[RMDB]
Conditions: 150 mM KOAc, 10 mM MgCl2 and 150 mM bicine (pH 8.5), 24 C. Chemical mapping of a 177-nucleotide RNA with DMS and 2A3. DMS adducts were read by reverse transcription with MarathonRT. Reactivities are given for positions 27 through 126. The data come from the RNA Mapping Database (RMDB), library M2PK50. The 2A3 profile rests on 3,458 reads.

RNA sequence: GGGAACGACUCGAGUAGAGUCGAAAAUAACGUACUUUCGAGUACGUUAAGUCUCCCGGCGCUAGCAGGGCUGAAGAGAAGAUGGAGGAGCUGGUGGUCGAAUUAGGGGGGGAUUCGUCCCCCCCAAACUACGAUAGAUGUUCGCAUCUAUCGUAGUAAAAGAAACAACAACAACAAC
Reactivity to DMS in 0.01 (KOAc 150mM, MgCl2 10mM, bicine 150mM(pH8.5), 24C), signal-to-noise 9, nucleotides 027 to 126: u000a010a000c000g010u000a010c000u000u000u010c150g020a020g010u000a000c000g010u000u000a010a070g010u010c130u000c010c010c010g020g010c080g020c070u000a070g020c070a070g010g010g010c050u000g010a090a080g000a100g000a060a080g000a060u000g010g000a080g000g000a100g010c050u000g010g020u000g010g010u000c060g000a090a080u010u010a100g010g010g000g020g010g000g000a030u000u010c150g000u000c000c000c000c000c000c000c000a000a010
Reactivity to 2A3 in 0.01 (KOAc 150mM, MgCl2 10mM, bicine 150mM(pH8.5), 24C), signal-to-noise 2, nucleotides 027 to 126: u040a000a000c010g010u000a000c000u000u060u160c230g010a010g010u000a010c000g000u000u010a000a010g030u000c020u000c040c000c040g040g040c020g000c050u050a020g040c030a040g080g060g000c020u030g030a080a000g060a020g010a090a040g070a030u120g000g070a050g030g000a030g000c020u020g020g030u030g020g040u070c050g040a040a100u140u110a250g020g000g000g020g000g030g000a000u040u030c060g020u050c030c000c000c000c000c030c000a000a020